[RMDB]
RNA sequence: GGGAACGACUCGAGUAGAGUCGAAAAGAGAGCUGCUUCGGCAGCUCUCCGUCAGGUAGUUCCUAUCUCAAUUACCUGUAGUGGCCAACGUCGGGAUAGGAAGAGAGCCCUGCUUCGGCAGGGCUAAGCUUCAAAGCAAAUUCGUUUGCUUUGAAGCAAAAGAAACAACAACAACAAC
Reactivity to DMS in 0.01 (KOAc 150mM, MgCl2 10mM, bicine 150mM(pH8.5), 24C), signal-to-noise 4, nucleotides 027 to 126: g010a030g010a000g000c000u000g010c010u000u010c190g030g020c000a000g010c000u000c000u000c000c020g010u000c010a010g020g000u010a060g010u000u000c030c000u010a020u000c010u000c010a230a080u000u000a010c010c020u000g000u000a070g030u010g010g000c020c010a140a120c260g000u010c190g000g000g000a010u000a010g010g000a070a100g010a210g000a040g010c000c000c000u000g000c000u000u010c180g020g020c000a010g000g000g000c000u000a010a040
Reactivity to 2A3 in 0.01 (KOAc 150mM, MgCl2 10mM, bicine 150mM(pH8.5), 24C), signal-to-noise 3, nucleotides 027 to 126: g010a000g020a000g010c010u010g010c010u050u080c270g100g050c010a000g000c000u000c000u000c000c000g040u030c010a000g000g010u020a010g060u020u030c010c000u000a010u030c010u000c020a100a190u070u040a020c010c000u030g030u120a180g120u110g120g040c030c030a050a030c110g120u100c090g140g000g000a000u000a000g000g040a060a000g080a010g000a010g010c000c000c000u010g000c000u040u050c250g100g020c010a000g000g010g010c000u000a000a000